Notes: An RNA of 170 nucleotides, treated with 2A3 and DMS and read out base by base. It was measured as part of the RMDB library 15KLIB. For 2A3 the reverse transcriptase was SuperScript II with manganese. The 2A3 profile rests on 8,478 reads. 2A3 is a SHAPE reagent: it acylates the 2'-hydroxyl of flexible nucleotides of all four kinds. Reactivities are given for positions 27 through 129.
[RMDB]
RNA sequence: GGGAACGACUCGAGUAGAGUCGAAAAGGUCGGACCGCGAGGAGGUGGAGAUGCCAUGCCGACCCGAAGAGGAAAGAAGAACGCGAGACGCGAACCUGUGAGUGGAAACCCGCUUUAUUCACUGGGGAUGGGACAUGCUUCGGCAUGUCCAAAAGAAACAACAACAACAAC
Reactivity to 2A3 in 0.01 (KOAc 150mM, MgCl2 10mM, bicine 150mM(pH8.5), 24C), signal-to-noise 4, nucleotides 027 to 129: g020g010u020c000g010g000a050c010c020g000c040g030a060g020g010a020g000g000u090g040g000a070g010a020u120g050c030c010a050u090g000c000c000g000a020c000c010c000g020a040a000g010a040g010g030a050a040a000g030a030a000g000a070a020c060g030c050g070a020g060a040c080g020c000g060a040a070c000c040u030g030u090g040a020g000u020g010g000a060a030a020c020c000c020g040c030u080u090u060a120u090u090c060a040c060u050g000g010g000g000a000u060g060
Reactivity to DMS in 0.01 (KOAc 150mM, MgCl2 10mM, bicine 150mM(pH8.5), 24C), signal-to-noise 4, nucleotides 027 to 129: g010g000u030c060g020g020a070c050c000g030c090g020a090g000g000a070g040g080u070g070g010a050g060a060u050g040c100c030a160u030g050c030c050g000a080c040c040c110g010a070a040g020a100g020g030a020a030a130g040a000a000g000a000a060c000g030c090g040a040g000a070c060g020c100g020a060a080c040c040u000g030u020g030a040g070u020g030g060a000a080a150c060c020c030g000c130u060u030u030a050u010u000c100a070c000u030g000g000g000g030a080u000g000